[RMDB]
RNA sequence: GGGAACGACUCGAGUAGAGUCGAAAAGAGAAGCGUCUUGCUGAUGAUCGCAUGGCCCUCGGUGAAAGAGCCCGGGUGCCAGGCUCCUGACCCUGAAUUGACGUGCGUCCCACUGCACUCCUGCACCUCACGUGGCUGAGUGUUCCAGUGACUGAGAGUCACUAAUCAGUUUCGACUGAUUAGUGACAAAAGAAACAACAACAACAAC
Reactivity to DMS in 0.01 (KOAc 150mM, MgCl2 10mM, bicine 150mM(pH8.5), 24C), signal-to-noise 2, nucleotides 027 to 156: g020a120g020a130a140g040c050g040u000c020u010u000g020c050u000g000a140u010g020a100u010c060g000c020a100u010g010g010c000c030c000u000c050g010g040u070g020a120a180a190g030a290g000c090c010c050g060g030g050u000g010c040c010a040g000g010c000u000c120c050u010g010a120c090c010c020u000g000a080a100u000u000g000a040c070g010u010g010c090g000u000c020c000c010a080c060u000g000c030a060c000u000c010c030u000g000c020a060c050c020u000c060a130c120g010u000g030g000c050u000g000a090g060u010g000u010u000c040c030a080g000u000g000a300c040u000g000a110g010a300
Reactivity to 2A3 in 0.01 (KOAc 150mM, MgCl2 10mM, bicine 150mM(pH8.5), 24C), signal-to-noise 4, nucleotides 027 to 156: g080a000g030a140a030g020c030g020u040c050u110u140g040c080u070g030a130u110g030a060u130c070g000c070a040u010g010g000c000c030c010u000c020g020g000u090g100a200a130a130g110a110g080c010c010c000g030g000g000u020g000c000c000a010g010g000c000u010c000c050u110g050a120c000c020c020u060g110a150a080u110u120g020a020c030g010u050g050c020g050u060c020c000c010a020c030u020g000c000a010c020u020c020c030u040g000c020a090c050c020u090c030a080c130g060u110g070g000c030u020g010a030g020u020g000u060u060c040c010a030g020u040g090a070c050u110g060a040g050a020
About this RNA:
Conditions: 150 mM KOAc, 10 mM MgCl2 and 150 mM bicine (pH 8.5), 24 C. This 207-nucleotide RNA was probed chemically with DMS and 2A3. It was measured as part of the RMDB library OK3TST. For 2A3 the reverse transcriptase was SuperScript II with manganese.